An RNA of 177 nucleotides, treated with DMS and 2A3 and read out base by base. The 2A3 profile rests on 1,071 reads. Values are in units of 0.01, from 0 to 300, in steps of 10.
RNA sequence: GGGAACGACUCGAGUAGAGUCGAAAAAAUAUCCUCGACAGGCUGCCUGUCCGACAGAGCUUUUAGAUCUUCUGAUCUUUCCCUGCAGCAUAUCGCUUAUGCAUCAAGCGAUUGUCGGAUCACACAAAGACUGCGUAUGUUUCGACAUACGCAGUCUAAAAGAAACAACAACAACAAC
Reactivity to DMS in 0.01 (KOAc 150mM, MgCl2 10mM, bicine 150mM(pH8.5), 24C), signal-to-noise 1, nucleotides 027 to 126: a010a100u010a060u000c030c010u000c110g010a150c110a040g010g000c080u000g000c010c050u010g010u000c010c020g000a050c120a040g000a090g000c150u000u000u010u020a010g000a050u000c010u000u010c230u000g020a030u000c020u000u000u010c010c000c000u000g000c050a060g010c060a040u000a020u000c040g010c020u000u000a060u010g050c180a120u010c120a020a020g000c010g000a040u000u000g010u010c020g020g000a070u030c110a030c190a010c160a040a110
Reactivity to 2A3 in 0.01 (KOAc 150mM, MgCl2 10mM, bicine 150mM(pH8.5), 24C), signal-to-noise 1, nucleotides 027 to 126: a000a000u180a070u040c000c010u040c000g030a050c020a030g050g000c020u010g070c010c000u060g010u010c000c010g010a020c010a040g140a010g040c050u040u030u000u060a020g000a050u020c000u300u060c170u290g000a000u000c000u000u020u000c000c000c000u000g060c040a090g010c010a030u070a010u150c010g010c030u090u050a060u190g160c080a070u160c070a030a000g010c000g000a000u030u030g030u060c000g040g020a050u050c020a040c010a000c030a060a150